Conditions: 150 mM KOAc, 10 mM MgCl2 and 150 mM bicine (pH 8.5), 24 C. An RNA of 177 nucleotides, treated with 2A3 and DMS and read out base by base. Values cover nucleotides 27 to 126. Source: RMDB library OK2TST, as collected in RNAgym. 2A3 adducts were read by reverse transcription with SuperScript II with manganese. The 2A3 profile rests on 4,949 reads.
[RMDB]
RNA sequence: GGGAACGACUCGAGUAGAGUCGAAAAAUCCAACUUGCGGUGGAUAUUAGUGCUACAGGUGAUGCUAGGUUGGGGCUCUAUAAUCGGCCCAGCACGAAAGGCGAACGGUUAAAGCAGUAUCUGGCAACAGUACUAUCCGAUUCGUCGGAUAGUACUGAAAAGAAACAACAACAACAAC
Reactivity to 2A3 in 0.01 (KOAc 150mM, MgCl2 10mM, bicine 150mM(pH8.5), 24C), signal-to-noise 4, nucleotides 027 to 126: a020u020c000c000a020a030c050u050u100g020c050g070g080u060g030g030a020u030a060u140u160a090g070u040g050c010u030a060c030a080g040g070u050g030a060u070g010c020u040a040g020g020u040u070g070g000g020g030c010u030c050u120a180u080a150a140u090c040g000g000c010c010c010a010g020c010a020c020g080a100a030a020g050g010c010g000a020a020c020g070g030u080u130a080a090a020g000c000a020g020u040a050u050c020u040g050g000c010a060a030
Reactivity to DMS in 0.01 (KOAc 150mM, MgCl2 10mM, bicine 150mM(pH8.5), 24C), signal-to-noise 4, nucleotides 027 to 126: a080u000c010c010a110a090c110u010u000g020c080g000g030u000g000g020a050u000a070u000u010a120g020u000g020c020u000a050c080a060g010g010u010g010a100u000g030c040u000a080g010g010u000u000g010g030g010g000c050u000c090u000a090u010a090a090u010c130g010g000c020c010c050a060g000c060a050c080g000a060a080a110g010g010c020g010a070a050c040g010g010u000u000a050a080a100g010c050a050g000u000a040u000c030u000g010g000c130a070a180